Structure probing data (2A3) for a 177-nucleotide construct.
RNA sequence: GGGAACGACUCGAGUAGAGUCGAAAAACGGCGCCUUACGAGGCGCCGAACACAAACAGAAUGAAAAGGAGCUGACGCAUUGUCGCUCCCUUUUGUCUAUUUUUUAACGUGGAGUACGCUCCACGAAAGUUCAACACGAGUUCGCUCGUGUUGAACUAAAAGAAACAACAACAACAAC
Reactivity to 2A3 in 0.01 (KOAc 150mM, MgCl2 10mM, bicine 150mM(pH8.5), 24C), signal-to-noise 3, nucleotides 027 to 126: a010c010g000g000c020g010c000c010u150u090a130c260g100a010g000g000c000g010c000c000g030a000a030c020a000c020a030a230a000c040a010g140a150a130u110g010a020a050a000a000g000g000a000g000c070u150g190a010c000g050c160a300u080u300g000u000c000g010c000u060c000c000c000u010u020u000u030g000u000c010u010a160u030u090u060u000u050u200a110a030c020g010u000g000g000a000g000u040a050c300g020c070u000c000c000a000c000g010a020a000
Source: RMDB library RFM100, as collected in RNAgym. 2A3 adducts were read by reverse transcription with SuperScript II with manganese.